[RMDB]
RNA sequence: GGGAACGACUCGAGUAGAGUCGAAAAAGGGAACCUAGCGUUCUUCUAGUGGUGGUCGUUGUGGCUUUCAUGUUCUUCAGCAACAUGUGUGGCACGGAAGACUCCAGCCUCAAAGGUGUGGCGGCCGCCUUUGCUGUCAUGUUUGCGCCUCUCAGCGGAAAGAAGGAAGGUUCGCCUUCCUUCUUUCAAAAGAAACAACAACAACAAC
Reactivity to DMS in 0.01 (KOAc 150mM, MgCl2 10mM, bicine 150mM(pH8.5), 24C), signal-to-noise 1, nucleotides 027 to 156: a050g000g000g020a050a050c000c020u000a120g020c110g010u000u000c010u030u000c060u010a150g050u000g030g050u000g010g050u000c010g050u000u000g050u000g010g000c000u000u000u000c010a020u000g010u000u010c030u000u010c170a300g000c030a030a030c040a050u010g010u010g030u000g010g000c020a070c070g010g010a070a090g010a090c020u000c040c030a210g000c030c000u020c120a090a050a090g020g030u070g030u000g000g000c010g030g030c020c030g000c040c000u000u000u040g020c020u010g000u000c050a160u010g020u000u020u000g010c050g020c070c020u000c090u020c110a180g040c040g030
Reactivity to 2A3 in 0.01 (KOAc 150mM, MgCl2 10mM, bicine 150mM(pH8.5), 24C), signal-to-noise 1, nucleotides 027 to 156: a000g000g010g030a010a000c020c030u080a110g000c040g130u030u010c030u170u090c050u080a050g060u030g110g000u000g010g000u000c040g000u010u060g030u020g060g000c000u010u180u110c020a000u030g030u060u000c050u190u120c090a110g040c120a030a020c020a020u000g020u050g000u090g080g000c080a050c100g040g060a150a020g050a050c040u010c040c010a010g030c020c000u050c080a080a040a030g090g060u060g000u040g090g000c020g000g030c010c000g000c030c060u020u040u050g000c000u020g000u080c010a090u110g030u090u070u170g030c030g000c050c020u010c000u020c070a020g020c050g070
An RNA of 207 nucleotides, treated with DMS and 2A3 and read out base by base.
It was measured as part of the RMDB library OK3TST.
The DMS profile rests on 3,098 reads.
The reactions ran in a buffer of 150 mM KOAc, 10 mM MgCl2 and 150 mM bicine (pH 8.5), at 24 C.